[RMDB]
RNA sequence: GGGAACGACUCGAGUAGAGUCGAAAAGGAGGCUCGUGAUCAGAGAGAGGAGUAGGGCGUGGACAAGGGCUCAGAGUCCAUGAGCCUGGGCGUAGUGACAUCCAAGAGGGGUAGGAUGUCAGGAAGCUGUUCAGCAAUGUUUCGACAUUGCUGAACAAAAAGAAACAACAACAACAAC
Reactivity to DMS in 0.01 (KOAc 150mM, MgCl2 10mM, bicine 150mM(pH8.5), 24C), signal-to-noise 3, nucleotides 027 to 126: g000g010a180g010g000c070u000c070g020u000g020a080u000c140a090g010a110g010a120g010a100g010g000a110g000u000a100g040g000g000c110g010u000g000g000a130c200a110a150g010g010g000c030u010c040a080g010a210g010u000c140c120a090u000g000a030g020c030c010u010g000g000g000c130g000u010a130g020u000g010a000c020a010u020c010c000a040a130g020a200g010g010g000g020u000a170g000g000a030u000g000u000c000a040g000g030a110a130g000c100
Reactivity to 2A3 in 0.01 (KOAc 150mM, MgCl2 10mM, bicine 150mM(pH8.5), 24C), signal-to-noise 2, nucleotides 027 to 126: g050g010a030g000g030c020u010c010g130u100g100a200u220c120a030g080a000g010a000g030a030g110g020a060g030u130a080g000g070g030c100g050u060g000g020a030c060a090a080g030g000g000c010u040c010a040g020a030g140u040c060c010a030u040g020a020g020c010c010u000g000g010g030c010g020u060a040g150u050g010a000c010a010u000c000c000a040a020g070a050g090g000g010g010u010a020g010g010a000u010g010u000c000a000g040g030a030a020g050c050
An RNA of 177 nucleotides, treated with DMS and 2A3 and read out base by base. DMS adducts were read by reverse transcription with MarathonRT. 2A3 adducts were read by reverse transcription with SuperScript II with manganese. The reactions ran in a buffer of 150 mM KOAc, 10 mM MgCl2 and 150 mM bicine (pH 8.5), at 24 C. For DMS, 1,890 sequencing reads were counted.